The data come from the RNA Mapping Database (RMDB), library OK1LIB. Chemical mapping of a 177-nucleotide RNA with DMS and 2A3. Values cover nucleotides 27 to 126. For DMS the reverse transcriptase was MarathonRT. The DMS profile rests on 2,599 reads. The RNA was probed in 150 mM KOAc, 10 mM MgCl2 and 150 mM bicine (pH 8.5) at 24 C.
RNA sequence: GGGAACGACUCGAGUAGAGUCGAAAAGCAGAUUAUCUGAGUGUAGUCAAUUUGGAGGAUUAUGACACAGGAGAUAACGCCAAGAUAGAGGAUCUUCUUACAAGAAGAGACAACAUGCCUGGCUUGGCUCAGAGCAGUGGUUCGCCACUGCUCUGAGAAAAGAAACAACAACAACAAC
Reactivity to DMS in 0.01 (KOAc 150mM, MgCl2 10mM, bicine 150mM(pH8.5), 24C), signal-to-noise 3, nucleotides 027 to 126: g020c070a090g000a210u000u010a000u000c020u010g000a280g020u000g070u000a030g040u010c070a000a130u020u010u000g000g000a170g010g010a090u010u030a080u070g030a100c000a060c020a050g000g010a080g000a040u050a010a030c120g000c020c020a020a050g000a090u000a010g010a300g020g000a120u000c000u000u000c010u010u060a100c300a040a050g010a010a000g000a000g000a100c080a040a160c150a030u000g010c180c020u020g060g000c010u000u000g000g040
Reactivity to 2A3 in 0.01 (KOAc 150mM, MgCl2 10mM, bicine 150mM(pH8.5), 24C), signal-to-noise 4, nucleotides 027 to 126: g050c020a000g080a230u030u030a070u070c000u050g090a060g110u070g030u050a110g060u100c040a080a160u080u160u180g120g040a080g040g060a050u070u090a070u230g020a000c020a000c000a040g140g080a030g030a020u080a060a000c020g020c010c020a020a010g020a010u080a070g160a040g040g010a010u000c010u010u000c040u070u220a130c100a070a010g030a010a000g000a000g100a080c020a030a040c040a070u150g050c000c000u040g010g000c000u020u010g060g010